[RMDB]
RNA sequence: GGGAACGACUCGAGUAGAGUCGAAAAAGCAUGCACCCAUCCGCGAGCACUAGGCGGAACUACGUAACACUUCGAUGCGGCAGUAGAAGCAUUUUUCCGCUCUCGCUUCGCCGAGCGUGCACUCAUGCGCGCAAAAGGCAUUCGUGCCUUUUGCGCGAAAAGAAACAACAACAACAAC
Reactivity to 2A3 in 0.01 (KOAc 150mM, MgCl2 10mM, bicine 150mM(pH8.5), 24C), signal-to-noise 1, nucleotides 027 to 126: a010g100c070a000u050g010c010a010c060c030c000a130u000c010c010g010c010g040a040g020c020a020c120u110a030g090g000c000g000g050a020a000c010u030a000c060g080u060a060a020c030a020c050u120u110c100g230a220u170g030c000g080g000c110a030g030u110a020g040a090a000g000c050a090u070u090u020u020u010c030c000g000c030u040c020u040c060g000c000u120u110c030g020c050c010g020a010g030c010g050u000g000c020a050c030u060c040a040u170g040
Reactivity to DMS in 0.01 (KOAc 150mM, MgCl2 10mM, bicine 150mM(pH8.5), 24C), signal-to-noise 1, nucleotides 027 to 126: a100g010c070a070u000g010c030a060c030c130c050a200u000c050c090g010c040g010a050g000c100a120c190u000a110g010g000c000g010g000a000a080c120u000a040c070g030u000a030a080c180a140c030u010u010c090g000a190u030g060c110g000g000c160a050g010u000a080g020a070a100g010c070a110u010u030u000u000u000c080c020g000c000u000c120u000c250g000c000u040u000c010g010c000c080g080a180g040c240g000u000g000c100a020c120u000c100a070u040g010

An RNA of 177 nucleotides, treated with 2A3 and DMS and read out base by base. It was measured as part of the RMDB library OK2TRN. Reactivities are rounded to 0.1 and cut off at 0 and 3. For DMS, 658 sequencing reads were counted. DMS adducts were read by reverse transcription with MarathonRT. The 2A3 profile rests on 1,262 reads. The reactions ran in a buffer of 150 mM KOAc, 10 mM MgCl2 and 150 mM bicine (pH 8.5), at 24 C.